[RMDB]
RNA sequence: GGGAACGACUCGAGUAGAGUCGAAAAUAUUCUGGCGAUCAUUACGCUGCGUCUGCCGAUGGAGUUCUGGCAACGCUACAGUGCCACGAUGCUGCUCGGAUCUAUCAUCCUGCUGAUGAUCGUCCUGCUUGUCCGGAGGGUUCGCCCUCCGGACAAGAAAAGAAACAACAACAACAAC
Reactivity to 2A3 in 0.01 (KOAc 150mM, MgCl2 10mM, bicine 150mM(pH8.5), 24C), signal-to-noise 2, nucleotides 027 to 126: u180a040u000u060c020u010g000g030c000g000a010u020c000a020u030u060a030c170g050c010u030g050c110g060u080c110u070g060c010c020g020a070u100g070g100a010g050u070u010c020u030g000g000c030a110a010c050g050c080u080a070c110a090g050u030g030c000c010a070c210g050a040u120g010c000u000g100c010u010c010g000g010a090u050c060u100a160u090c070a030u020c020c020u040g020c020u020g020a010u000g000a010u020c000g020u020c000c020u070g070
Reactivity to DMS in 0.01 (KOAc 150mM, MgCl2 10mM, bicine 150mM(pH8.5), 24C), signal-to-noise 2, nucleotides 027 to 126: u010a200u000u000c020u000g010g000c000g010a040u000c010a010u000u000a030c240g010c010u010g000c180g000u000c160u010g030c010c020g000a030u000g000g000a040g010u000u000c050u010g020g000c010a010a040c080g000c120u000a080c180a180g010u000g000c000c010a050c240g020a040u000g000c000u000g000c040u010c060g000g000a080u000c140u000a120u020c120a130u000c060c020u000g030c010u010g000a020u000g000a020u000c040g000u000c000c120u000g020
About this RNA
Structure probing data (2A3 and DMS) for a 177-nucleotide construct. Values cover nucleotides 27 to 126. For DMS, 1,205 sequencing reads were counted. Conditions: 150 mM KOAc, 10 mM MgCl2 and 150 mM bicine (pH 8.5), 24 C.